[RMDB]
RNA sequence: GGGAACGACUCGAGUAGAGUCGAAAAGAUAUGGACCGUAUGGCAGCGACGAUCUAGGGUCGGAAACGACCCUAGGGAGCUGACCAUCGGUCCUAAGUCAAAACUCGAGCGCUUCGGCGCUCGAGAACAGGAUAGCUAUGUUCGCAUAGCUAUCCUGAAAAGAAACAACAACAACAAC
Reactivity to 2A3 in 0.01 (KOAc 150mM, MgCl2 10mM, bicine 150mM(pH8.5), 24C), signal-to-noise 2, nucleotides 027 to 126: g030a000u070a030u130g000g000a000c010c020g050u270a080u130g160g000c010a010g010c000g170a300c010g010a300u020c000u000a000g030g000g010u000c010g010g040a070a060a010c020g000a000c020c010c000u000a000g010g000g000a000g010c000u020g040a070c010c000a020u030c000g010g000u020c000c000u000a000a000g010u000c020a020a030a080a100c000u000c010g010a000g000c020g000c010u080u140c300g130g020c020g000c000u000c020g000a010g000a010a020
Reactivity to DMS in 0.01 (KOAc 150mM, MgCl2 10mM, bicine 150mM(pH8.5), 24C), signal-to-noise 3, nucleotides 027 to 126: g010a040u000a300u010g010g000a020c000c000g000u020a020u010g010g000c000a020g000c000g010a090c300g000a020u010c010u000a000g000g010g030u000c010g010g000a040a070a160c000g030a010c000c000c000u000a000g000g000g010a010g020c010u000g000a130c000c000a020u010c010g010g000u000c000c000u000a000a060g000u020c020a120a090a160a220c020u000c000g010a010g030c000g050c000u000u020c220g020g010c000g020c000u010c000g010a000g000a030a110
Structure probing data (2A3 and DMS) for a 177-nucleotide construct. The RNA was probed in 150 mM KOAc, 10 mM MgCl2 and 150 mM bicine (pH 8.5) at 24 C. Reactivities are given for positions 27 through 126. For 2A3 the reverse transcriptase was SuperScript II with manganese. It was measured as part of the RMDB library TTRDES.